Conditions: 150 mM KOAc, 10 mM MgCl2 and 150 mM bicine (pH 8.5), 24 C. Structure probing data (DMS and 2A3) for a 177-nucleotide construct. The 2A3 profile rests on 2,763 reads.
RNA sequence: GGGAACGACUCGAGUAGAGUCGAAAACACAUUGUGGAGGAAACCUUGGCAUACCAGCAAUUGUUCUUCCAAUUGGUCAUGCUGAUGUACGAUUGAUUGACAUCUUUGUAUACAAAAUCCUUAAGCACAACUGAAAACCAUUCGUGGUUUUCAGUUGAAAAGAAACAACAACAACAAC
Reactivity to DMS in 0.01 (KOAc 150mM, MgCl2 10mM, bicine 150mM(pH8.5), 24C), signal-to-noise 3, nucleotides 027 to 126: c110a120c120a060u030u030g020u000g000g010a060g000g000a030a100a040c120c170u000u000g000g030c000a040u000a030c150c070a080g020c110a030a050u000u000g000u000u020c120u000u000c180c020a050a060u000u000g010g000u010c090a020u010g010c020u000g010a080u000g010u000a050c040g000a030u000u010g020a060u000u000g020a090c130a150u000c010u000u020u000g000u000a040u000a070c120a070a060a090a110u000c020c010u010u000a120a130g020c140a130
Reactivity to 2A3 in 0.01 (KOAc 150mM, MgCl2 10mM, bicine 150mM(pH8.5), 24C), signal-to-noise 2, nucleotides 027 to 126: c050a010c030a070u080u170g000u050g090g040a040g000g030a080a080a020c020c000u050u060g020g000c010a020u040a070c010c020a010g050c000a050a060u040u040g050u120u100c040u080u070c030c000a030a050u010u060g000g060u050c030a030u030g000c040u050g020a050u050g020u040a010c040g110a140u020u150g050a060u020u070g090a070c010a050u010c000u010u060u060g050u020a050u010a060c050a010a100a030a070u000c020c020u080u080a080a050g020c050a010
The DMS profile rests on 2,334 reads. DMS adducts were read by reverse transcription with MarathonRT.